Overview
An RNA of 207 nucleotides, treated with DMS and 2A3 and read out base by base. It was measured as part of the RMDB library OK3TST. 2A3 adducts were read by reverse transcription with SuperScript II with manganese. DMS adducts were read by reverse transcription with MarathonRT.
RNA sequence: GGGAACGACUCGAGUAGAGUCGAAAAAAAGUUAAAUGGACUAUUCUGCCCAUCCCUGACUGAGCUGAACCGUGAUUUCUCUUGAUUAUGCUUUUACACUGCGAAUCGCGAGGCUCCAGAGACAUAAUGGGCGUCUGUGGGAGAGUGGCAGCAAUUACUCCCGAUUACUAUUCGUAGUAAUCGGGAGAAAAGAAACAACAACAACAAC
Reactivity to DMS in 0.01 (KOAc 150mM, MgCl2 10mM, bicine 150mM(pH8.5), 24C), signal-to-noise 1, nucleotides 027 to 156: a060a050a130g040u020u010a010a110a040u010g000g040a050c010u010a150u000u010c090u000g000c020c000c040a100u020c010c020c000u020g000a110c020u010g010a100g020c070u010g000a110a060c040c040g020u000g010a120u010u000u010c000u010c030u000u000g030a110u000u000a100u000g010c060u000u000u010u000a060c000a040c000u010g000c080g000a030a050u000c030g030c050g000a170g000g020c000u030c020c000a050g030a080g010a060c030a060u000a110a170u010g010g010g020c070g000u000c050u000g040u010g020g010g010a060g000a150g060u000g010g010c040a060g010c040a030a080u010u010a140
Reactivity to 2A3 in 0.01 (KOAc 150mM, MgCl2 10mM, bicine 150mM(pH8.5), 24C), signal-to-noise 2, nucleotides 027 to 156: a060a000a000g080u170u060a090a160a140u140g030g000a010c010u040a120u190u050c010u040g000c010c000c010a070u010c000c000c040u040g050a090c070u000g000a000g050c000u080g120a080a060c000c030g010u000g010a020u060u270u020c010u070c060u100u080g020a090u190u080a090u200g050c090u060u060u050u040a150c180a060c220u100g020c030g050a030a020u000c000g000c050g000a030g000g000c010u000c030c010a010g010a000g000a040c000a020u300a100a140u300g000g050g100c030g040u000c000u030g110u050g010g000g000a110g020a060g010u230g000g030c000a010g000c000a000a060u300u300a030